RNA sequence: GGGAACGACUCGAGUAGAGUCGAAAAACUUUGCUGUCCAGGCUGGAAUGUGGUGACAUGAUCAUGGCCCACUGCAACCUCAAACUCCUGGGCUCAAGUGAUUCUCCUGCCUCAGCCCUCCAACUAGCUGGGAUGACAGACACACACCACCACACCAUACUUUUAAUCGCUUCGGCGAUUAAAAGUAAAAAGAAACAACAACAACAAC
Reactivity to 2A3 in 0.01 (KOAc 150mM, MgCl2 10mM, bicine 150mM(pH8.5), 24C), signal-to-noise 1, nucleotides 027 to 156: a020c050u100u050u200g050c080u020g050u000c010c000a030g020g000c060u040g000g010a220a160u020g030u010g030g010u010g010a010c010a150u110g110a100u300c050a040u130g110g070c010c010c000a000c020u030g000c030a000a100c000c070u050c130a160a160a100c070u030c020c000u020g000g000g000c000u000c000a040a000g020u000g040a110u050u000c040u010c040c000u020g010c000c000u040c000a020g030c000c010c050u030c030c030a070a020c040u050a020g060c010u030g010g030g010a030u060g030a040c030a030g020a010c000a000c010a030c000a020c110c010a050c010c010a080c010a010c050c010a010

Structure probing data (2A3) for a 207-nucleotide construct. Reactivities are rounded to 0.1 and cut off at 0 and 3.